[RMDB]
RNA sequence: GGGAACGACUCGAGUAGAGUCGAAAAUGAGUAGUGUGCACCACCACACCUGGCUAAUUUGUGUAUUUUUUGUAGUGAUAGGAUGUCGCCAUGUUGCCCAGACUGCUCUCGAACUCCUCACUUUGGGCAUAGGUAGUCGGUUCGCCGACUACCUAUGAAAAGAAACAACAACAACAAC
Reactivity to 2A3 in 0.01 (KOAc 150mM, MgCl2 10mM, bicine 150mM(pH8.5), 24C), signal-to-noise 1, nucleotides 027 to 126: u210g030a000g040u110a030g000u070g070u100g030c040a010c000c020a020c010c040a000c010a010c000c010u000g010g000c040u060a060a070u070u140u080g070u030g060u050a150u000u080u070u040u120u070g160u090a170g010u040g100a110u060a060g100g000a050u090g030u070c000g000c020c010a020u120g000u060u100g050c000c000c010a010g020a040c030u040g030c020u040c000u000c020g000a030a030c030u030c020c000u050c000a100c000u000u230u020g040g040g010
Reactivity to DMS in 0.01 (KOAc 150mM, MgCl2 10mM, bicine 150mM(pH8.5), 24C), signal-to-noise 3, nucleotides 027 to 126: u000g000a110g000u000a060g020u000g020u000g010c080a090c040c050a070c070c020a040c030a060c040c060u000g000g020c040u000a070a050u000u000u010g010u000g000u010a010u000u000u000u000u020u000g010u010a030g020u010g010a070u000a070g020g020a070u000g010u010c060g010c030c030a050u010g010u000u010g000c060c030c020a090g000a050c050u000g020c050u000c020u000c080g000a050a100c090u000c020c000u000c110a070c100u010u000u010g010g010g010